[RMDB]
RNA sequence: GGGAACGACUCGAGUAGAGUCGAAAAGGGUGGCCGGCGCCGACGCCGCCUACGUAUGCCGGGGCCGGGUCUGCGAUCUGCCGGUGACCAGCGCGGCCGAACUCGCCACCGCUUUGGGCGUACCCGGAGUAUUUGAAUAGUUCGCUAUUCAAAUACUAAAAGAAACAACAACAACAAC
Reactivity to DMS in 0.01 (KOAc 150mM, MgCl2 10mM, bicine 150mM(pH8.5), 24C), signal-to-noise 9, nucleotides 027 to 126: g010g010g030u000g010g020c050c060g020g010c070g030c100c090g010a140c300g010c020c050g000c030c020u000a040c140g010u000a070u010g010c040c010g010g000g010g020c260c040g010g000g010u000c040u010g010c070g000a070u000c050u000g010c030c020g010g010u000g000a080c140c050a050g010c110g010c020g000g000c030c020g010a120a130c070u000c180g000c010c030a070c020c020g010c040u000u000u000g010g000g010c070g010u000a080c020c010c010g010g000
Reactivity to 2A3 in 0.01 (KOAc 150mM, MgCl2 10mM, bicine 150mM(pH8.5), 24C), signal-to-noise 5, nucleotides 027 to 126: g030g000g020u030g010g030c090c100g050g030c070g010c080c040g040a030c020g060c020c000g010c010c010u060a090c060g060u090a100u260g040c030c000g000g000g030g020c100c000g010g000g040u020c060u130g090c070g060a100u020c010u110g080c020c000g000g000u020g020a050c010c000a020g000c060g000c000g050g000c020c010g010a050a030c010u010c040g020c010c010a020c000c010g050c080u060u060u050g080g000g010c040g020u040a080c000c000c000g010g050